[RMDB]
RNA sequence: GGGAACGACUCGAGUAGAGUCGAAAAUCAGGAACCUUCGGGUUCCUGAAAAGAACGCUGCAUCGCAAACCGAGCGCGCGAGAGCGCGCGUACGCGAAGAAAAAAGAAUUGGGUUCGCCCAAUUCAACGUAUUACUUGAGUUCGCUCAAGUAAUACGAAAAGAAACAACAACAACAAC
Reactivity to DMS in 0.01 (KOAc 150mM, MgCl2 10mM, bicine 150mM(pH8.5), 24C), signal-to-noise 3, nucleotides 027 to 126: u000c000a000g000g000a020a000c000c000u000u010c190g040g020g020u010u000c000c000u000g000a000a010a070a130g000a140a140c120g040c110u010g020c100a080u010c020g030c030a090a140a090c190c130g010a230g000c010g000c000g020c000g060a150g000a300g010c000g020c010g010c000g000u000a030c220g030c030g020a030a090g020a000a040a080a100a140a110g000a000a000u000u010g010g000g000u000u010c240g020c010c000c000a010a010u000u000c000a050a100
Reactivity to 2A3 in 0.01 (KOAc 150mM, MgCl2 10mM, bicine 150mM(pH8.5), 24C), signal-to-noise 2, nucleotides 027 to 126: u030c010a000g000g020a000a010c000c000u110u180c270g070g000g000u010u000c010c000u000g000a010a010a010a020g020a070a010c050g000c120u140g050c050a080u030c040g000c060a110a080a110c070c090g070a060g020c040g000c000g020c020g040a060g010a040g210c070g010c070g010c020g000u030a020c070g010c010g020a050a080g140a080a160a000a010a000a000g000a010a000u010u010g050g000g000u020u050c180g070c020c000c000a000a010u000u010c010a000a010
Source: RMDB library M2PK50, as collected in RNAgym.
An RNA of 177 nucleotides, treated with DMS and 2A3 and read out base by base.
The DMS profile rests on 2,091 reads.
For 2A3, 2,998 sequencing reads were counted.
For 2A3 the reverse transcriptase was SuperScript II with manganese.
As a SHAPE reagent, 2A3 marks flexible, mostly unpaired nucleotides at the ribose 2'-OH.
Reactivities are given for positions 27 through 126.